Annotation:
Chemical mapping of a 170-nucleotide RNA with DMS and 2A3. The 2A3 profile rests on 112,958 reads. The RNA was probed in 150 mM KOAc, 10 mM MgCl2 and 150 mM bicine (pH 8.5) at 24 C. The DMS profile rests on 33,221 reads.
RNA sequence: GGGAACGACUCGAGUAGAGUCGAAAACGUCCCCUCGGUAAUGGCGAAUGGGACCCAGAGAUCUCUCUAGAUUCCGAUAGAGAAUCGAGAGAAAACUGGCUCUCCCUUAGCCAUCCGAGUGGACGUUAACGCAGAUUGUUCGCAAUCUGCAAAAGAAACAACAACAACAAC
Reactivity to DMS in 0.01 (KOAc 150mM, MgCl2 10mM, bicine 150mM(pH8.5), 24C), signal-to-noise 7, nucleotides 027 to 129: c020g020u000c010c020c050c010u000c010g070g000u080a100a010u020g010g030c020g000a110a040u000g000g010g000a000c210c000c020a010g010a030g000a250u030c030u020c020u030c010u070a060g000a050u010u030c000c000g130a240u130a180g150a110g010a040a010u030c020g000a020g020a030g020a010a000a050a070c010u020g000g000c040u010c050u000c030c000c040u030u040a190g030c030c000a000u030c010c010g000a030g000u030g020g010a030c000g000u040u040a040a030c120
Reactivity to 2A3 in 0.01 (KOAc 150mM, MgCl2 10mM, bicine 150mM(pH8.5), 24C), signal-to-noise 9, nucleotides 027 to 129: c000g000u000c000c000c010c000u000c000g030g010u080a110a040u000g000g000c010g050a050a050u040g000g000g000a070c080c000c000a000g010a010g010a030u000c010u000c000u000c020u080a090g000a010u010u000c010c030g170a210u180a240g230a030g000a050a000u010c010g000a000g000a000g000a000a010a000a000c000u000g000g000c000u010c000u000c000c000c000u000u020a000g000c000c000a010u000c000c000g000a000g000u000g000g000a000c000g000u000u020a040a010c080